[RMDB]
The record gives the reactivity of an RNA of 207 nucleotides to 2A3.

RNA sequence: GGGAACGACUCGAGUAGAGUCGAAAAUAAGAGAACUCAAAACCCUUCUCUUACGAACACUAACUGGGGAAGGAACUGGAAGGAUCUGUCCUCUUUGCAGGUGGAAGCCACAUUCAUACAUUUAUCAAACAUUAUUGUCACAAAAUGGACUGAGACAGGGGAAAAUGAUGUUCGCAUCAUUUUCCCCAAAAGAAACAACAACAACAAC
Reactivity to 2A3 in 0.01 (KOAc 150mM, MgCl2 10mM, bicine 150mM(pH8.5), 24C), signal-to-noise 2, nucleotides 027 to 156: u090a000a030g030a000g000a150a050c040u050c150a060a070a070a110c010c000c000u000u000c000u000c000u050u090a090c110g100a170a010c040a060c160u100a150a100c080u080g010g030g010g010a020a000g070g020a000a010c080u110g030g000a010a010g000g040a030u030c030u040g070u000c000c000u020c000u090u070u220g030c040a000g040g040u010g060g000a040a000g010c000c000a030c000a020u070u270c050a080u100a020c010a020u020u210u170a220u190c030a050a070a080c040a050u020u170a120u160u110g010u060c010a020c050a090a150a090a160u090g010g080a020c050u020g030a030g030a070c060a030
For 2A3 the reverse transcriptase was SuperScript II with manganese.